[RMDB]
RNA sequence: GGGAACGACUCGAGUAGAGUCGAAAAACGCGAACCUGUGAGUGGAAACCCGCUUUAUUCACUGGGGUCGACAGCUCUGGGGAGAGAAGGGAGGAUCGGAUGGGAAGAGUAUAUCCUAUGGGAAUCCGAACAAACCUAAGUUCGCUUAGGUUUGUUCAAAAGAAACAACAACAACAAC
Reactivity to 2A3 in 0.01 (KOAc 150mM, MgCl2 10mM, bicine 150mM(pH8.5), 24C), signal-to-noise 2, nucleotides 027 to 126: a010c050g000c030g010a000a040c000c000u050g010u060g070a050g010u040g020g050a080a030a030c050c040c000g090c050u070u160u090a160u140u080c060a040c190u130g000g000g040g010u010c000g010a050c040a050g010c000u030c020u070g070g000g000g020a060g000a010g020a030a010g040g000g000a060g000g010a040u100c060g030g040a000u050g070g010g010a070a020g020a030g050u040a050u020a030u070c010c020u030a080u040g040g000g070a020a050u040c070c010
Reactivity to DMS in 0.01 (KOAc 150mM, MgCl2 10mM, bicine 150mM(pH8.5), 24C), signal-to-noise 2, nucleotides 027 to 126: a080c110g000c050g010a100a110c070c030u010g030u000g010a050g020u000g000g000a110a110a150c050c050c060g010c180u000u000u000a040u020u000c090a020c080u020g000g000g010g010u000c020g030a140c110a100g010c040u000c020u010g020g000g020g000a100g020a100g000a050a070g010g000g010a050g000g010a030u000c110g010g020a040u000g000g010g000a070a020g000a080g000u000a050u000a070u000c040c020u000a050u010g010g000g000a160a090u000c100c090

Chemical mapping of a 177-nucleotide RNA with 2A3 and DMS. Values cover nucleotides 27 to 126. The RNA was probed in 150 mM KOAc, 10 mM MgCl2 and 150 mM bicine (pH 8.5) at 24 C. For DMS the reverse transcriptase was MarathonRT. For 2A3, 1,363 sequencing reads were counted. For 2A3 the reverse transcriptase was SuperScript II with manganese. The DMS profile rests on 1,561 reads.